Notes
Structure probing data (2A3 and DMS) for a 177-nucleotide construct.
RNA sequence: GGGAACGACUCGAGUAGAGUCGAAAAGCACGGAGACAUGCACGGAAACGUUGACGGAGGCCCCAUGACGAACGUGGCUGUCCGAGGCCUGCGUAUUUGACUGGUAAUUCAGUCGUUAGGACAGCUAGGUGAUACCUAAUUUCGAUUAGGUAUCACCAAAAGAAACAACAACAACAAC
Reactivity to 2A3 in 0.01 (KOAc 150mM, MgCl2 10mM, bicine 150mM(pH8.5), 24C), signal-to-noise 5, nucleotides 027 to 126: g020c020a010c050g050g030a050g020a040c060a040u090g000c020a010c060g020g040a070a090a000c050g030u090u200g070a020c020g080g030a010g020g040c000c010c000c000a050u120g060a030c090g020a170a010c060g050u060g030g000c000u000g010u010c010c020g000a050g000g040c000c000u080g050c030g020u060a170u100u110u150g000a000c010u010g010g050u080a080a090u140u080c000a000g000u000c020g000u040u080a020g000g000a010c000a000g010c010u010a060
Reactivity to DMS in 0.01 (KOAc 150mM, MgCl2 10mM, bicine 150mM(pH8.5), 24C), signal-to-noise 5, nucleotides 027 to 126: g020c050a040c060g010g000a100g000a100c080a040u000g020c040a070c040g000g000a090a080a080c090g010u000u000g020a070c050g020g000a080g010g010c030c020c040c060a110u010g010a070c120g000a060a070c170g020u000g000g000c010u000g000u000c010c010g010a090g010g000c020c020u000g000c050g010u000a070u010u010u010g000a010c020u000g000g000u010a090a130u000u010c000a000g010u000c010g000u000u010a120g010g000a030c010a010g000c000u000a090

For 2A3 the reverse transcriptase was SuperScript II with manganese. It was measured as part of the RMDB library OK2TRN.